[RMDB]
The record gives the reactivity of an RNA of 177 nucleotides to DMS. Reactivities are given for positions 27 through 126. The data come from the RNA Mapping Database (RMDB), library OK2TRN.

RNA sequence: GGGAACGACUCGAGUAGAGUCGAAAAGUGGCCACCUGCGGUGAGGAGAAGGUGACGCCAAUGGACUCCAUCUGAGCAAUGAAGGCUUCGUCUUUGGUGUUGGCGCCGGCGGUGCCGGCGGUGGCGACACAUCGGGUACCUUCGGGUACCCGAUGUGAAAAGAAACAACAACAACAAC
Reactivity to DMS in 0.01 (KOAc 150mM, MgCl2 10mM, bicine 150mM(pH8.5), 24C), signal-to-noise 1, nucleotides 027 to 126: g020u000g010g010c010c010a050c030c010u000g030c030g020g030u010g010a130g000g000a130g010a120a070g000g010u000g000a080c100g010c010c020a030a080u020g030g000a080c040u010c030c060a050u010c060u030g000a140g010c130a130a120u000g000a080a080g000g020c300u000u010c140g050u000c050u000u010u010g000g010u000g000u010u000g020g020c030g030c040c000g000g000c000g000g020u000g030c000c000g000g020c050g000g040u010g000g010c020g000a180